[RMDB]
RNA sequence: GGGAACGACUCGAGUAGAGUCGAAAAUUAGUUCUUCCAUCAGUUUAGUUUCAAACAGAAUUUGGUAUGGUAUGCUAGCCAUUUUGGAGACUUUUGCAAGGGAGCGUAGGUGGUUUGGCAGGGCAGGCAGUAUGAGGGGUUUCGACCCCUCAUACUGAAAAGAAACAACAACAACAAC
Reactivity to 2A3 in 0.01 (KOAc 150mM, MgCl2 10mM, bicine 150mM(pH8.5), 24C), signal-to-noise 1, nucleotides 027 to 126: u060u010a030g050u040u050c010u070u000c030c020a060u070c060a060g060u060u100u190a000g030u020u070u150c140a110a140a060c020a050g110a130a030u050u140u120g060g000u100a060u100g030g000u080a130u140g130c010u020a010g000c000c040a040u100u100u090u040g000g020a080g060a080c040u150u060u180u020g060c120a060a080g080g000g020a040g070c060g060u000a070g020g050u060g000g010u120u260u020g020g110c000a080g000g020g040c000a030g000g000
Reactivity to DMS in 0.01 (KOAc 150mM, MgCl2 10mM, bicine 150mM(pH8.5), 24C), signal-to-noise 3, nucleotides 027 to 126: u000u010a090g010u010u000c050u000u000c010c010a100u000c080a090g010u000u000u000a090g010u000u000u000c070a090a060a120c070a160g020a040a120u000u000u000g020g020u000a070u010g000g020u010a040u000g010c050u000a110g000c030c010a050u000u010u020u010g020g000a100g000a070c050u000u010u010u020g030c090a060a110g000g010g000a060g000c080g020u010a060g010g020u010g010g000u000u000u000g010g010c050a060g010g000g010c090a070g010g020